[RMDB]
RNA sequence: GGGAACGACUCGAGUAGAGUCGAAAAUAUGGCUUAUGGCAAUUGCACAUUUGGUGCUCCAGAUGAUGCCUCUCGGUUACUUCAUACCGUGCUUGCAAAGGCUGAGUUAUGCUGUUCUGCACGCAUGCACAAUACGUCCGUUCGCGGACGUAUUGUGAAAAGAAACAACAACAACAAC
Reactivity to 2A3 in 0.01 (KOAc 150mM, MgCl2 10mM, bicine 150mM(pH8.5), 24C), signal-to-noise 3, nucleotides 027 to 126: u220a120u080g040g000c030u130u070a080u170g050g000c040a040a190u160u140g030c000a030c020a070u120u040u160g160g010u100g070c000u000c020c000a040g010a120u090g030a050u120g020c000c000u020c010u010c000g050g000u060u080a090c040u160u140c030a070u050a120c000c060g050u020g040c020u020u050g000c000a010a030a050g000g000c000u040g030a060g150u110u120a070u150g020c010u020g060u130u090c040u030g040c000a000c020g030c020a030u040g050
Reactivity to DMS in 0.01 (KOAc 150mM, MgCl2 10mM, bicine 150mM(pH8.5), 24C), signal-to-noise 4, nucleotides 027 to 126: u010a060u010g010g000c010u000u000a100u010g010g010c230a070a120u000u000g010c020a040c020a070u000u010u000g000g030u000g010c250u010c030c020a040g010a040u010g000a110u000g020c020c150u000c030u000c040g030g000u000u010a080c120u000u000c140a080u000a070c110c010g030u010g010c090u000u000g010c020a020a100a160g000g000c000u000g000a130g010u010u000a040u000g000c000u000g010u010u010c130u000g000c010a050c070g030c040a040u000g020
Structure probing data (2A3 and DMS) for a 177-nucleotide construct.
For DMS, 3,997 sequencing reads were counted.
For 2A3, 2,696 sequencing reads were counted.
The RNA was probed in 150 mM KOAc, 10 mM MgCl2 and 150 mM bicine (pH 8.5) at 24 C.